RNA sequence: GGGAACGACUCGAGUAGAGUCGAAAAGCACGCGGUUCCGCAAUCGUCUACGUGUCUCACAAACUCACGGAAAUCUUUGAGAUCGCGGAUGAGUAUACCGUGUUCCGCGACGGCCGUUUCAUCGAGACCGGAAACAUCAAGGAUAUCGAUCGCCGCCCUUAUGGGACCUAUUCGUAGGUCCCAUAAGAAAAGAAACAACAACAACAAC
Reactivity to DMS in 0.01 (KOAc 150mM, MgCl2 10mM, bicine 150mM(pH8.5), 24C), signal-to-noise 1, nucleotides 027 to 156: g020c080a050c030g010c000g030g000u000u010c020c050g000c060a050a030u000c060g030u020c010u010a040c000g000u000g010u010c030u020c020a210c280a090a060a050c070u020c120a080c090g060g020a090a090a110u000c030u000u000u000g000a100g010a020u000c010g000c010g000g040a030u000g010a160g070u000a160u000a080c040c020g040u030g020u000u020c000c010g000c020g020a050c060g010g050c030c030g020u000u000u000c090a180u000c130g020a110g000a090c040c010g000g020a160a050a040c140a060u000c100a050a110g000g010a110u000a080u000c020g000a040u000c020g000c030c020g010c030c060
Reactivity to 2A3 in 0.01 (KOAc 150mM, MgCl2 10mM, bicine 150mM(pH8.5), 24C), signal-to-noise 5, nucleotides 027 to 156: g090c030a020c090g010c010g080g000u110u090c040c010g040c060a030a040u040c040g100u050c070u100a040c020g050u050g050u070c030u040c070a090c030a040a190a020c050u050c060a020c030g050g060a100a100a070u100c060u070u100u090g040a060g030a050u050c020g010c020g040g000a020u080g020a020g130u160a060u060a200c020c030g050u060g060u100u010c020c010g030c020g020a040c000g020g000c030c020g020u070u220u190c080a080u070c030g010a030g090a200c030c010g030g040a080a120a030c070a060u090c030a040a050g000g000a030u060a030u270c030g010a010u080c040g010c000c000g000c000c010
Chemical mapping of a 207-nucleotide RNA with DMS and 2A3. The RNA was probed in 150 mM KOAc, 10 mM MgCl2 and 150 mM bicine (pH 8.5) at 24 C. The data come from the RNA Mapping Database (RMDB), library OK3TST. The 2A3 profile rests on 2,752 reads.